[RMDB]
RNA sequence: GGGAACGACUCGAGUAGAGUCGAAAACAACCCAACUCCUACUCAAUACGUCCUCGUCGUACAGAACGGUAACAUGUUUUCUGAACAUCCGCGCUUGGGUAUACGAGUAUACACCUUACCCAACCCUCCAACCACCUAAAGUUCGCUUUAGGUGGAAGGUAAUAGUUAGGUUCGCCUAACUAUUACCAAAAGAAACAACAACAACAAC
Reactivity to DMS in 0.01 (KOAc 150mM, MgCl2 10mM, bicine 150mM(pH8.5), 24C), signal-to-noise 3, nucleotides 027 to 156: c030a110a260c000c010c000a110a090c050u000c020c040u000a020c030u010c050a080a170u000a080c020g020u000c030c020u000c060g070u000c070g010u000a120c040a090g000a080a080c040g020g000u000a090a120c110a060u000g020u020u000u000u000c130u000g010a050a060c040a080u000c010c000g010c070g030c080u000u010g020g020g020u010a050u000a090c050g020a150g000u000a100u000a100c110a110c050c050u000u000a050c010c000c020a070a140c020c020c000u000c010c020a020a220c000c010a010c010c010u000a010a010a010g010u000u000c300g040c010u000u000u000a000g000g010u000g000g020a010a010
Reactivity to 2A3 in 0.01 (KOAc 150mM, MgCl2 10mM, bicine 150mM(pH8.5), 24C), signal-to-noise 9, nucleotides 027 to 156: c040a030a080c010c010c010a020a050c040u060c020c020u060a080c030u040c080a080a080u060a100c040g050u060c020c020u050c030g060u030c020g010u060a050c030a080g070a120a020c030g020g030u080a090a040c030a110u080g040u030u040u060u070c070u080g040a040a020c010a060u050c030c030g080c020g020c090u030u040g020g000g020u030a020u020a040c070g010a020g080u020a020u040a040c090a050c020c030u040u060a030c000c000c010a020a030c010c000c000u010c010c010a040a070c000c000a010c000c000u010a020a000a000g020u040u090c160g080c090u000u000u000a000g000g000u000g000g000a000a000